[RMDB]
RNA sequence: GGGAACGACUCGAGUAGAGUCGAAAAGGGAGCUGUCAACCGAGCUGAGAUCCGAGGAUGUCCGAAUGGGGAAACCCAGCCACAGUGAUGUGUGGUUACCCGCGCCUGAAUAUAUAGGGCGUGUGGACAUUGCGACCCUUUUCGAAGGGUCGCAAUGAAAAGAAACAACAACAACAAC
Reactivity to DMS in 0.01 (KOAc 150mM, MgCl2 10mM, bicine 150mM(pH8.5), 24C), signal-to-noise 3, nucleotides 027 to 126: g030g010g000a080g000c000u000g000u030c080a070a040c050c040g000a080g000c000u000g020a060g000a060u030c030c020g000a140g010g000a040u010g000u000c000c050g010a100a080u010g000g000g030g030a110a090a150c010c000c030a040g010c020c020a020c000a080g010u010g020a050u030g000u000g000u000g000g000u000u020a100c020c050c000g000c000g010c000c000u000g000a100a140u030a120u050a070u000a140g000g000g020c000g040u000g000u060g010g010a290
Reactivity to 2A3 in 0.01 (KOAc 150mM, MgCl2 10mM, bicine 150mM(pH8.5), 24C), signal-to-noise 3, nucleotides 027 to 126: g040g000g000a060g020c010u040g020u130c050a040a080c070c020g010a010g000c060u060g070a050g050a080u010c010c000g010a070g040g020a060u030g060u030c000c010g030a040a080u090g000g000g000g080a020a020a040c000c000c000a000g010c000c000a020c000a000g050u100g180a130u090g030u030g000u000g030g000u020u020a050c000c000c000g000c000g000c010c000u020g040a120a020u230a000u070a000u080a160g000g020g020c010g000u000g050u080g000g000a000